An RNA of 207 nucleotides, treated with DMS and 2A3 and read out base by base. The DMS profile rests on 5,988 reads. The RNA was probed in 150 mM KOAc, 10 mM MgCl2 and 150 mM bicine (pH 8.5) at 24 C. It was measured as part of the RMDB library OK3TST. For 2A3, 2,887 sequencing reads were counted. For 2A3 the reverse transcriptase was SuperScript II with manganese.
RNA sequence: GGGAACGACUCGAGUAGAGUCGAAAACUAAUUAUGUAACUGCUAAUUCUCUUCCGCUGUAGCACAUCUAAAUUCCUAUUUGUCUCUCACGGCCCAGUUCACAUAACCUUUCUUUACCCUCCCAGUCUAUGCUCCAAAUGAAGAGAGAGAACCAUAACCAUAAUUUACUGUUCGCAGUAAAUUAUGGAAAAGAAACAACAACAACAAC
Reactivity to DMS in 0.01 (KOAc 150mM, MgCl2 10mM, bicine 150mM(pH8.5), 24C), signal-to-noise 3, nucleotides 027 to 156: c050u010a070a120u010u010a110u010g020u000a100a130c020u000g010c000u000a080a110u010u000c020u000c020u000u010c020c010g030c080u000g020u000a070g030c040a080c050a070u000c060u000a030a050a140u000u000c020c010u000a150u010u010u010g030u000c030u000c030u000c070a130c090g010g000c020c000c010a090g010u000u000c030a050c080a180u000a050a050c030c020u000u000u000c010u000u000u000a090c150c130c010u000c010c010c020a110g030u010c070u000a060u010g000c020u000c000c000a010a030a060u000g010a060a090g020a090g010a050g000a100g010a100a080c040c030a050u000a080a280
Reactivity to 2A3 in 0.01 (KOAc 150mM, MgCl2 10mM, bicine 150mM(pH8.5), 24C), signal-to-noise 4, nucleotides 027 to 156: c030u050a070a110u230u100a100u140g060u070a060a070c040u070g020c030u070a040a090u110u020c050u000c000u110u010c020c050g020c070u050g040u080a020g010c040a020c030a070u040c050u070a030a090a130u110u050c020c000u030a090u070u130u070g050u000c020u000c000u020c040a050c060g030g000c000c010c010a020g010u020u020c020a020c010a060u080a040a020c010c000u040u030u000c000u050u090u150a120c040c000c010u010c010c010c000a000g020u000c030u040a090u180g010c000u000c000c000a020a000a040u060g010a030a020g010a000g010a010g000a000g010a010a010c040c000a020u020a050a020